[RMDB]
RNA sequence: GGGAACGACUCGAGUAGAGUCGAAAACGGCAUGAUACCACCGUUAUCGGGUCAACAGUGUAGUUGCAAAUGACAACAAUGCUCAGGGUUAUGCUCUCGCUGCCUAAUGGCGGUGCGGGAAACCCACAAAAGAUAUUGAUCUUCGGAUCAAUAUCAACCAGCUAAGACACUUCGGUGUCUUAGCUGGAAAAGAAACAACAACAACAAC
Reactivity to 2A3 in 0.01 (KOAc 150mM, MgCl2 10mM, bicine 150mM(pH8.5), 24C), signal-to-noise 1, nucleotides 027 to 156: c010g000g000c000a010u060g000a010u040a130c010c010a000c020c020g080u120u000a000u060c060g010g010g000u010c000a030a040c090a090g070u050g010u080a050g000u020u000g030c030a000a170a210u300g040a190c000a010a010c000a050a020u130g040c060u060c180a180g000g000g000u020u040a120u250g080c000u000c020u000c000g000c040u020g000c000c000u210a140a040u040g000g000c000g000g060u000g000c030g000g000g000a040a000a000c000c000c040a040c010a040a030a000a050g000a000u010a000u020u020g000a000u040c010u080u020c280g110g000a000u000c060a000a000u000a000u000c000a000a000
Annotation:
This 207-nucleotide RNA was probed chemically with 2A3. The reactions ran in a buffer of 150 mM KOAc, 10 mM MgCl2 and 150 mM bicine (pH 8.5), at 24 C.